[RMDB]
RNA sequence: GGGAACGACUCGAGUAGAGUCGAAAAUUAAUAGAUAGUGUUACUGAUGAUGAAAUUCUAGAAGCAUAUCAGUUAAUGACAACUAAAGAAGGUGUCUUUAGUGAACCAGCAAGUAAUGCUUCUAUUGCCCAUUAAGGCUUUUCGAAGCCUUAAUGGGAAAAGAAACAACAACAACAAC
Reactivity to 2A3 in 0.01 (KOAc 150mM, MgCl2 10mM, bicine 150mM(pH8.5), 24C), signal-to-noise 2, nucleotides 027 to 126: u030u000a020a000u000a010g040a040u080a040g000u000g000u030u010a010c010u030g050a070u020g030a030u050g080a070a120a190u200u070c040u040a090g060a170a040g040c010a010u020a020u160c010a010g030u010u050a140a080u110g060a010c020a060a010c090u060a050a120a090g080a070a070g140g060u070g070u080c000u000u030u020a040g000u030g030a050a040c090c020a020g040c030a050a000g000u020a010a000u000g000c000u020u000c000u000a000u020u070g020
Reactivity to DMS in 0.01 (KOAc 150mM, MgCl2 10mM, bicine 150mM(pH8.5), 24C), signal-to-noise 2, nucleotides 027 to 126: u000u000a030a030u000a040g000a050u010a030g030u000g020u000u000a000c000u000g020a080u020g000a040u000g010a150a110a100u010u000c030u000a090g010a050a080g030c050a030u000a090u000c030a080g010u000u020a060a140u000g010a040c220a080a020c050u010a040a090a090g000a060a130g020g030u000g000u000c010u000u000u000a010g020u010g000a030a070c150c030a080g010c080a100a020g010u000a010a020u000g000c010u000u000c000u000a010u000u010g010